[RMDB]
The record gives the reactivity of an RNA of 177 nucleotides to DMS and 2A3.
It was measured as part of the RMDB library OK2TST.
RNA sequence: GGGAACGACUCGAGUAGAGUCGAAAAGGGUAGAGGCCCAAGUAUGAAGACAUGCCCAGUGUUAGCUUGAGGGUUCCUGUGCAAUGCCACUGAUGGUUGGCACAGUUAUAGGAAUGUCAAACAUCAGUCUAAGGGUCUAAUUCGUUAGACCCUUAGAAAAAGAAACAACAACAACAAC
Reactivity to DMS in 0.01 (KOAc 150mM, MgCl2 10mM, bicine 150mM(pH8.5), 24C), signal-to-noise 9, nucleotides 027 to 126: g010g000g020u000a060g010a110g010g020c020c010c020a060a070g010u010a080u000g010a120a140g010a050c040a050u000g010c020c020c020a170g010u000g010u000u010a110g010c030u000u000g010a100g010g010g010u000u010c030c010u000g020u000g020c090a070a070u010g000c080c090a180c020u000g000a020u000g000g000u000u000g000g000c000a020c080a100g010u010u010a140u010a140g000g010a110a170u000g010u000c010a020a020a020c010a010u000c020a020g010
Reactivity to 2A3 in 0.01 (KOAc 150mM, MgCl2 10mM, bicine 150mM(pH8.5), 24C), signal-to-noise 6, nucleotides 027 to 126: g070g000g020u090a060g020a050g200g090c000c000c010a000a020g140u140a090u190g130a130a040g040a010c010a030u050g020c010c020c010a000g020u040g020u100u090a050g010c020u020u040g030a100g020g050g000u030u040c010c020u050g020u040g030c050a090a120u140g040c030c020a020c020u000g010a010u020g010g020u020u010g010g010c010a010c020a040g080u160u120a200u140a170g110g090a160a090u030g000u010c010a000a010a010c010a010u010c000a000g010